[RMDB]
RNA sequence: GGGAACGACUCGAGUAGAGUCGAAAAUGGUUUCGACGCGGGUACGGACGCGCAGUGGGGCAUGCCGAGCUUAGUGUGCUCGUAAAACUGACUAAAACAAACUAACUGCAAACGACGAACGUUUCGCACUCGCUGCUUAAUAACCAGUGAGCCCUACGUCCGAUCUUAAGUUCGCUUAAGAUCGGACAAAAGAAACAACAACAACAAC
Reactivity to 2A3 in 0.01 (KOAc 150mM, MgCl2 10mM, bicine 150mM(pH8.5), 24C), signal-to-noise 2, nucleotides 027 to 156: u080g010g020u030u020u020c030g030a050c040g000c000g010g000g000u030a040c050g000g070a000c000g020c000g020c010a000g000u020g000g010g040g020c010a020u090g060c000c010g030a020g000c030u090u080a080g020u000g100u100g060c010u000c000g030u050a030a030a020a060c050u020g050a010c080u160a020a070a180a000c130a010a050a050c010u110a020a020c030u050g000c000a110a010a020c080g110a050c160g040a110a000c020g030u000u100u150c010g070c020a000c000u000c030g000c000u010g000c000u000u050a060a000u110a080a060c020c010a050g050u010g060a000g000c000c000c060u110a030c020
An RNA of 207 nucleotides, treated with 2A3 and read out base by base. It was measured as part of the RMDB library RSTRND.